[RMDB]
This 177-nucleotide RNA was probed chemically with 2A3 and DMS.
For DMS the reverse transcriptase was MarathonRT.
RNA sequence: GGGAACGACUCGAGUAGAGUCGAAAAGAAGAGAAUAAGCGCGGAUAUUUCUGUCGGUAGAGCCGCAGGACCGACACCUGCGAGUAUAGGGAUCAAGACCCUGUUCGCGCAAAGAUUGAAGUAGAAGAGCCUACGAUUAGUUCGCUAAUCGUAGGCUAAAAGAAACAACAACAACAAC
Reactivity to 2A3 in 0.01 (KOAc 150mM, MgCl2 10mM, bicine 150mM(pH8.5), 24C), signal-to-noise 1, nucleotides 027 to 126: g130a000a000g100a000g070a080a160u160a270a030g000c030g000c010g000g000a000u000a020u000u100u010c000u050g030u080c100g010g070u170a050g020a000g180c040c010g000c010a000g000g040a240c070c070g020a020c030a010c030c030u010g000c000g000a040g050u000a050u110a040g000g020g000a040u130c120a070a000g020a020c000c000c000u000g000u000u010c000g000c000g010c000a010a020a010g020a000u090u090g130a070a010g090u130a130g050a200a010g080
Reactivity to DMS in 0.01 (KOAc 150mM, MgCl2 10mM, bicine 150mM(pH8.5), 24C), signal-to-noise 1, nucleotides 027 to 126: g030a220a140g000a120g000a090a050u010a110a100g040c120g010c000g000g000a020u060a040u050u000u000c000u000g000u020c040g000g000u010a010g010a130g000c160c050g030c010a070g000g000a080c070c050g000a050c010a100c050c000u000g000c000g030a020g000u010a230u000a030g000g000g000a080u020c170a010a050g000a040c000c010c000u030g000u000u000c000g000c000g100c000a060a160a060g030a150u000u030g000a040a300g000u000a110g000a110a040g000